RNA sequence: GGGAACGACUCGAGUAGAGUCGAAAACCUGGAGAGGUCUUCUGCCCUAGCCCGGUCUUCGAAGCUUCCUUUGGCUACUACCCGGUGGAAACAACUGGAGCUUCAACGCCUUUUUUUCCAAUCUUCUUUAGCACCGGGCUAGGGAGUAAGCCCGUGGCCUAUCACAUAUGUUCGCAUAUGUGAUAGGAAAAGAAACAACAACAACAAC
Reactivity to 2A3 in 0.01 (KOAc 150mM, MgCl2 10mM, bicine 150mM(pH8.5), 24C), signal-to-noise 2, nucleotides 027 to 156: c030c000u030g010g190a250g010a070g080g010u050c060u080u010c050u110g290c000c000c010u000a000g030c000c000c000g050g000u030c090u300u150c210g010a000a010g000c010u100u070c000c000u020u030u030g050g020c000u050a020c000u080a140c050c000c000g060g000u010g030g090a270a240a060c050a020a000c060u020g010g010a000g000c000u010u000c050a050a040c040g090c010c020u080u030u040u050u010u140u100c100c060a190a180u100c150u300u040c010u130u280u130a000g040c060a000c010c010g000g000g000c000u000a010g000g010g000a000g000u010a000a000g000c000c000c000g050u050g080g070
Chemical mapping of a 207-nucleotide RNA with 2A3. The RNA was probed in 150 mM KOAc, 10 mM MgCl2 and 150 mM bicine (pH 8.5) at 24 C. It was measured as part of the RMDB library VIROID. For 2A3 the reverse transcriptase was SuperScript II with manganese.